[RMDB]
RNA sequence: GGGAACGACUCGAGUAGAGUCGAAAAGUGUUUGCGGGCGUGGCAUCAUCAAGAUUCACAUCCAUGCAUAUAUCACAAGACGCACAUAUACAUCCGAUUUGGCUGAGAAUCUUGAUGAUGCUGCAUCCGCAGACAAAAAUGGUGUAUUCGUACACCACCCGGUAAGAACUUUCGAGUUCUUACCGGGAAAAGAAACAACAACAACAAC
Reactivity to 2A3 in 0.01 (KOAc 150mM, MgCl2 10mM, bicine 150mM(pH8.5), 24C), signal-to-noise 4, nucleotides 027 to 156: g110u030g000u010u000u000g000c000g000g000g010c010g010u020g000g020c000a000u000c010a000u000c000a000a000g000a000u000u000c010a010c000a060u000c010c010a010u040g030c050a040u110a020u040a030u160c080a040c050a180a120g120a150c090g060c120a050c040a070u190a010u050a080c070a070u090c090c060g070a110u060u010u060g010g000c030u010g000a020g000a150a000u000c000u000u010g000a000u000g000a000u000g000c000u000g000c000a000u000c000c000g000c000a000g000a000c000a000a080a000a010a010u060g010g000u000g000u010a040u030u120c200g020u050a010c000a000c000c010a010
Source information: An RNA of 207 nucleotides, treated with 2A3 and read out base by base. For 2A3 the reverse transcriptase was SuperScript II with manganese.